[RMDB]
RNA sequence: GGGAACGACUCGAGUAGAGUCGAAAACGGGCGUCCACGCUGCCCGAAGGCACCCUGCAAGAAGCUCUGCAAGGCCCUGUUGUUAUGCAGGACAUUAUUCGCCGGGUGCAGAAGACCACAGAGCUUCAGGUACGGAUCGUUUCGACGAUCCGUACCUAAAAGAAACAACAACAACAAC
Reactivity to 2A3 in 0.01 (KOAc 150mM, MgCl2 10mM, bicine 150mM(pH8.5), 24C), signal-to-noise 2, nucleotides 027 to 126: c050g000g000g000c040g000u100c120c060a130c130g030c070u220g080c010c000c010g000a000a000g080g000c030a050c000c000c000u010g000c010a030a030g030a000a000g040c010u000c000u030g000c070a090a020g030g030c020c000c000u010g100u030u050g140u100u140a180u300g000c020a010g030g000a000c000a030u190u200a150u140u300c030g010c020c100g100g000g030u030g000c000a000g060a070a000g030a050c000c030a000c010a040g010a010g000c070u000u030c000
Chemical mapping of a 177-nucleotide RNA with 2A3.
The RNA was probed in 150 mM KOAc, 10 mM MgCl2 and 150 mM bicine (pH 8.5) at 24 C.
It was measured as part of the RMDB library OK1LIB.
For 2A3, 547 sequencing reads were counted.